Conditions: 150 mM KOAc, 10 mM MgCl2 and 150 mM bicine (pH 8.5), 24 C. Chemical mapping of a 177-nucleotide RNA with DMS and 2A3. For DMS the reverse transcriptase was MarathonRT. Reactivities are given for positions 27 through 126. For 2A3 the reverse transcriptase was SuperScript II with manganese.
[RMDB]
RNA sequence: GGGAACGACUCGAGUAGAGUCGAAAAAUGCAUAGAAAGAAAUCAGGCGCUGCCGAUCAAUAUGCCCGCCGCCAGGACGAGCGCACCGCCAAAAACGACCUGGAGUGCGGCGCGGAAGAAGGGCGUAUCGAUGAUUUAAUUUCGAUUAAAUCAUCGAAAAAGAAACAACAACAACAAC
Reactivity to DMS in 0.01 (KOAc 150mM, MgCl2 10mM, bicine 150mM(pH8.5), 24C), signal-to-noise 4, nucleotides 027 to 126: a080u000g010c030a080u000a090g000a120a100a120g010a100a100a060u010c050a080g020g010c040g010c120u010g020c030c040g000a140u010c100a060a070u000a120u010g000c010c010c010g010c030c020g010c000c020a020g010g020a110c040g010a090g000c080g000c070a060c070c070g020c030c100a030a070a070a090a140c070g020a080c020c030u000g000g000a070g010u010g000c010g000g030c100g000c020g010g010a070a120g000a060a080g000g010g010c020g020u020a080
Reactivity to 2A3 in 0.01 (KOAc 150mM, MgCl2 10mM, bicine 150mM(pH8.5), 24C), signal-to-noise 2, nucleotides 027 to 126: a000u090g000c010a020u050a160g140a080a130a020g060a060a130a040u090c050a100g100g000c070g050c120u100g080c050c010g040a050u060c020a070a070u020a020u150g000c000c000c000g020c000c010g000c010c010a000g010g010a020c040g030a010g060c070g030c100a040c060c060g040c030c000a070a150a040a030a000c020g010a040c000c000u010g000g020a040g030u110g020c010g020g030c060g000c000g020g020a020a010g030a020a010g040g010g000c020g020u020a070